The record gives the reactivity of an RNA of 177 nucleotides to 2A3 and DMS. The DMS profile rests on 3,440 reads. Reactivities are given for positions 27 through 126. The reactions ran in a buffer of 150 mM KOAc, 10 mM MgCl2 and 150 mM bicine (pH 8.5), at 24 C. For 2A3, 1,652 sequencing reads were counted.
RNA sequence: GGGAACGACUCGAGUAGAGUCGAAAAAAGGAGGGCCUGUUUGAGGAGGCGGGGCUGCUGCGGGAGCGCGAGGUGGACAUGAAGGUGCGGCUGUCGGGCCUGCCGGAGGAGGCGCCCACCGUCGUAAAUAAAACGACUGAUUCGUCAGUCGUUUUAUAAAAGAAACAACAACAACAAC
Reactivity to 2A3 in 0.01 (KOAc 150mM, MgCl2 10mM, bicine 150mM(pH8.5), 24C), signal-to-noise 2, nucleotides 027 to 126: a020a020g100g020a070g000g050g000c050c040u090g100u080u090u130g130a060g050g020a020g050g000c020g020g010g010g000c070u080g000c000u030g030c010g020g030g000a040g060c040g010c010g020a020g030g030u060g010g030a030c000a060u130g060a060a050g050g010u080g010c030g010g040c030u030g070u110c040g010g000g010c030c050u060g000c010c010g040g010a100g080g050a060g020g000c020g060c010c030c010a020c000c030g030u030c030g030u030a070a150
Reactivity to DMS in 0.01 (KOAc 150mM, MgCl2 10mM, bicine 150mM(pH8.5), 24C), signal-to-noise 3, nucleotides 027 to 126: a060a080g000g000a120g010g000g020c050c030u000g010u020u010u010g010a120g010g010a120g010g020c080g010g000g010g010c070u010g020c070u000g030c110g000g000g000a090g020c080g000c070g010a070g010g020u010g000g010a070c080a070u010g010a120a090g000g000u000g020c050g000g000c030u010g000u010c130g010g000g010c040c050u000g040c030c040g000g010a140g020g020a100g010g000c070g000c010c010c010a020c050c100g000u000c060g000u010a030a080